[RMDB]
RNA sequence: GGGAACGACUCGAGUAGAGUCGAAAAUAGAUUGUUAACUCCAAGAUACCAGUAUACCUCAAAAAUUUGAGUGAGAUCCGCUGCCAAGUUCCUAUUAUUGAAGAUCGCAAUACCCAAUUCUUUGACCUGAGUUAGUGAUCUCCAAUCCAUGUUAGCGCGGAUCUUUUCUAUUCGUAGAAAAGAUCCGAAAAGAAACAACAACAACAAC
Reactivity to 2A3 in 0.01 (KOAc 150mM, MgCl2 10mM, bicine 150mM(pH8.5), 24C), signal-to-noise 1, nucleotides 027 to 156: u090a000g010a040u000u050g020u050u000a030a060c040u000c020c000a060a050g010a070u090a060c000c040a020g040u010a030u020a090c000c000u020c010a060a040a040a150a280u090u120u150g040a040g030u050g000a040g010a010u040c040c040g010c040u000g030c050c030a150a020g020u020u060c000c000u100a070u270u000a020u060u000g060a010a010g000a000u020c020g050c050a020a020u030a150c020c040c000a010a070u090u050c100u020u140u210g030a060c000c070u030g010a010g050u010u090a040g000u010g020a000u000c000u000c020c000a030a050u000c040c010a050u130g040u070u050a020g010c020g010

The data come from the RNA Mapping Database (RMDB), library OK3TST. Chemical mapping of a 207-nucleotide RNA with 2A3. Conditions: 150 mM KOAc, 10 mM MgCl2 and 150 mM bicine (pH 8.5), 24 C.